[RMDB]
RNA sequence: GGGAACGACUCGAGUAGAGUCGAAAAGAAAAGAUCUAGUUUUGAAUCAGAUCGACGCGUAUGUCGCUCAGAAGUUCGGCUAGCUUAGUCGCUCUGACACUUAUCAAAGCGUAUGCGUGAAACAAAAGGGUAUUCUAUACUUCGGUAUAGAAUACCCAAAAGAAACAACAACAACAAC
Reactivity to DMS in 0.01 (KOAc 150mM, MgCl2 10mM, bicine 150mM(pH8.5), 24C), signal-to-noise 3, nucleotides 027 to 126: g020a110a040a080a130g000a030u000c000u000a040g000u000u020u080u010g000a100a080u070c070a050g000a010u010c000g000a080c050g030c020g000u010a010u000g040u010c090g030c110u000c020a030g000a030a030g000u010u030c030g010g000c040u040a020g030c150u020u020a050g010u000c010g010c090u000c000u010g000a050c120a100c110u000u020a060u060c170a080a080a110g000c000g000u000a000u000g010c010g000u000g000a110a110a060c150a040a060a100a090
Reactivity to 2A3 in 0.01 (KOAc 150mM, MgCl2 10mM, bicine 150mM(pH8.5), 24C), signal-to-noise 5, nucleotides 027 to 126: g080a010a070a020a020g010a000u020c030u080a120g090u110u080u190u280g150a130a060u110c000a020g000a020u010c000g010a030c010g010c000g010u020a000u050g160u200c020g000c020u000c000a060g020a080a010g060u140u140c000g010g000c040u070a080g090c040u110u120a010g020u040c000g000c010u000c010u030g040a010c040a060c110u190u220a210u300c100a170a080a000g000c000g000u010a010u000g000c000g010u030g040a080a090a010c040a030a050a000a010

Conditions: 150 mM KOAc, 10 mM MgCl2 and 150 mM bicine (pH 8.5), 24 C. Structure probing data (DMS and 2A3) for a 177-nucleotide construct. For 2A3 the reverse transcriptase was SuperScript II with manganese. DMS adducts were read by reverse transcription with MarathonRT. The DMS profile rests on 4,737 reads.